RNA sequence: GGGAACGACUCGAGUAGAGUCGAAAAAGAGCCGGAUACGUGCGGCUCAACGGGGGAUACGUGUGGUGCCGUCCGCUCCCCCUAUGGCAUAACAAAUGCACCACACACUAGGCUACGGCCUAGUGAAAAAAUCCCUACAUGUUCGCAUGUAGGGAAAGAUUAGUGAAUCGUUCGCGAUUCACUAAUCAAAAGAAACAACAACAACAAC
Reactivity to DMS in 0.01 (KOAc 150mM, MgCl2 10mM, bicine 150mM(pH8.5), 24C), signal-to-noise 1, nucleotides 027 to 156: a150g000a020g000c040c000g070g010a210u000a080c210g050u000g020c020g030g030c050u000c010a030a010c060g010g000g030g050g020a110u000a000c000g010u010g060u000g000g020u010g010c000c010g000u000c030c060g010c080u000c000c000c010c020c000u000a010u010g060g040c130a150u040a060a120c090a050a120a140u000g000c030a030c000c010a030c010a250c030a020c000u000a020g000g030c000u010a070c270g050g010c020c000u080a010g000u010g000a000a010a110a080a090a080u000c000c010c010u010a060c000a020u010g020u000u020c300g080c000a000u020g020u000a040g000g050g000a000a010a050
Reactivity to 2A3 in 0.01 (KOAc 150mM, MgCl2 10mM, bicine 150mM(pH8.5), 24C), signal-to-noise 4, nucleotides 027 to 156: a000g000a000g000c010c020g070g020a080u120a160c100g070u160g120c000g000g010c010u000c010a010a020c030g000g000g000g010g000a010u030a090c010g020u040g000u000g050g010u000g000c010c010g010u020c020c040g100c040u040c000c000c000c010c010u030a110u120g120g020c070a090u070a210a030c040a080a060a030u070g000c000a000c000c010a000c000a000c000a000c000u010a000g000g000c000u010a000c230g070g000c000c000u000a000g000u010g010a070a000a000a000a000a020u020c000c000c000u000a000c000a000u010g010u020u030c080g010c140a000u000g000u000a000g000g000g000a010a000a010